The record gives the reactivity of an RNA of 177 nucleotides to DMS and 2A3. 2A3 adducts were read by reverse transcription with SuperScript II with manganese. For 2A3, 7,470 sequencing reads were counted. For DMS, 7,935 sequencing reads were counted. The RNA was probed in 150 mM KOAc, 10 mM MgCl2 and 150 mM bicine (pH 8.5) at 24 C.
[RMDB]
RNA sequence: GGGAACGACUCGAGUAGAGUCGAAAAGCCGCAGCCGCUGCCGCAGCCAAAGAAGACGAGCAAGGCGGCGAAGAAGGGCCGCACGACGCCGCCGGCGGUGGACAGCGCAGCCCGCGACGCGAUGCUGUAGGUGAAUGAAAUUCGUUUCAUUCACCUAAAAAGAAACAACAACAACAAC
Reactivity to DMS in 0.01 (KOAc 150mM, MgCl2 10mM, bicine 150mM(pH8.5), 24C), signal-to-noise 6, nucleotides 027 to 126: g010c030c020g020c060a140g020c050c030g020c030u000g010c020c020g020c030a090g010c030c040a080a150a140g010a120a140g000a080c070g000a120g020c050a140a220g010g010c020g000g010c010g010a060a100g000a140a110g010g000g020c000c020g020c020a130c020g010a180c060g000c010c010g010c030c040g010g010c030g000g030u010g000g020a100c050a050g000c030g010c050a110g010c020c010c040g010c040g010a050c050g000c050g000a110u000g020c070u000g010
Reactivity to 2A3 in 0.01 (KOAc 150mM, MgCl2 10mM, bicine 150mM(pH8.5), 24C), signal-to-noise 3, nucleotides 027 to 126: g030c020c020g000c030a010g020c010c010g000c010u010g000c010c000g000c050a030g030c010c040a130a060a060g180a090a030g090a090c070g030a030g080c030a020a050g030g010c010g010g000c010g000a040a000g070a020a060g050g070g000c020c000g010c010a130c040g100a030c060g000c000c000g000c000c050g020g000c010g010g010u010g000g000a030c030a010g010c010g000c020a020g010c010c010c020g000c040g020a030c050g000c020g040a050u120g030c020u050g050